About this RNA:
Chemical mapping of a 177-nucleotide RNA with DMS and 2A3. For DMS, 2,047 sequencing reads were counted. The reactions ran in a buffer of 150 mM KOAc, 10 mM MgCl2 and 150 mM bicine (pH 8.5), at 24 C. The 2A3 profile rests on 2,043 reads.
RNA sequence: GGGAACGACUCGAGUAGAGUCGAAAAACUCUUGAGGACCCAAACGCUACUCCGACAGAUGUGAGCAACGUUUGACUCUGAAUCUCUGUACUUGGAGUUCUCAAACCAGGCAGCAGAGUGGCCGUGGACCGAUGUAUCCAUUCGUGGAUACAUCGGUAAAAGAAACAACAACAACAAC
Reactivity to DMS in 0.01 (KOAc 150mM, MgCl2 10mM, bicine 150mM(pH8.5), 24C), signal-to-noise 3, nucleotides 027 to 126: a060c050u000c040u000u000g020a130g010g010a070c120c080c010a020a030a040c030g020c050u000a050c020u010c020c020g000a210c280a220g020a160u000g020u000g010a020g000c020a050a020c040g010u000u000u000g000a080c060u000c020u010g000a150a050u000c030u000c050u020g020u010a050c100u010u000g010g010a130g010u000u000c020u010c060a060a080a160c000c040a070g000g020c020a040g010c020a020g000a030g020u000g010g000c030c030g010u010g000g010
Reactivity to 2A3 in 0.01 (KOAc 150mM, MgCl2 10mM, bicine 150mM(pH8.5), 24C), signal-to-noise 2, nucleotides 027 to 126: a000c030u050c000u050u060g050a000g020g040a080c030c030c000a010a030a000c010g000c040u070a050c000u040c010c000g100a040c070a160g220a230u090g150u190g030a050g030c030a040a020c030g020u000u060u080g020a050c020u000c010u040g070a120a120u040c070u010c030u100g110u100a120c030u040u070g030g040a120g060u110u050c020u020c000a070a120a100c000c000a000g030g000c070a040g000c010a000g070a010g070u040g050g000c050c020g080u100g010g020